[RMDB]
Annotation: Chemical mapping of a 177-nucleotide RNA with DMS. The DMS profile rests on 589 reads.

RNA sequence: GGGAACGACUCGAGUAGAGUCGAAAAGAUAUGGACCCAGGUAGCAAGGCCCUCGGAAACGAGUGGCUGAUGACCUACUGGGUCCUAAGUCAAAAGUGUGGGAAGUAGUUCGCUACUUCCCACACAAGCAGUUUAAUCUCUUCGGAGAUUAAACUGCAAAAGAAACAACAACAACAAC
Reactivity to DMS in 0.01 (KOAc 150mM, MgCl2 10mM, bicine 150mM(pH8.5), 24C), signal-to-noise 1, nucleotides 027 to 126: g000a040u000a300u000g000g000a000c000c000c000a030g000g000u010a020g050c010a180a300g000g040c000c000c020u000c000g000g000a050a060a190c000g000a000g050u020g020g010c000u000g010a190u020g040a190c300c010u000a020c000u000g000g000g000u000c000c000u000a000a060g010u000c000a050a070a150a120g030u000g000u010g000g000g000a000a000g020u000a050g060u000u000c250g040c000u000a010c000u000u000c000c000c000a020c000a000c000a070a140

Reactivities are given for positions 27 through 126. The RNA was probed in 150 mM KOAc, 10 mM MgCl2 and 150 mM bicine (pH 8.5) at 24 C.